Source: RMDB library OK2TRN, as collected in RNAgym. Chemical mapping of a 177-nucleotide RNA with 2A3 and DMS. The reactions ran in a buffer of 150 mM KOAc, 10 mM MgCl2 and 150 mM bicine (pH 8.5), at 24 C. Reactivities are given for positions 27 through 126.
RNA sequence: GGGAACGACUCGAGUAGAGUCGAAAAAGGGCUGCAUAAGGCUGAUGAGUGGCUCGGGCAAGCCGCCAGCGCAGGGUAUCGGUGUCAAGGGUAUCGAGCCCAGGCCCAUUGAACUGACGCCGAGCCAGGCGUGAACUAGGUUCGCCUAGUUCACGCCAAAAGAAACAACAACAACAAC
Reactivity to 2A3 in 0.01 (KOAc 150mM, MgCl2 10mM, bicine 150mM(pH8.5), 24C), signal-to-noise 1, nucleotides 027 to 126: a000g050g010g000c030u020g020c060a050u070a240a070g120g000c030u040g030a120u080g050a050g090u150g000g030c010u000c080g000g030g000c010a080a000g000c000c000g030c000c100a070g050c060g000c070a030g000g000g080u180a300u300c000g010g010u010g000u030c010a020a100g080g000g000u030a080u180c070g080a030g000c020c000c000a020g040g040c060c010c000a020u080u170g030a100a080c080u020g020a010c010g000c030c000g020a000g040c030c000a000
Reactivity to DMS in 0.01 (KOAc 150mM, MgCl2 10mM, bicine 150mM(pH8.5), 24C), signal-to-noise 2, nucleotides 027 to 126: a060g010g000g020c030u000g020c030a050u010a110a090g000g000c000u020g010a170u020g040a160g010u000g000g010c020u010c080g010g000g020c040a180a060g000c030c030g020c010c070a030g010c110g010c060a120g000g000g010u000a110u000c000g000g020u010g000u000c010a060a230g000g000g010u020a170u000c060g010a100g000c000c000c020a300g000g000c000c000c000a130u000u000g000a050a180c100u000g000a030c000g030c000c000g000a020g000c000c000a080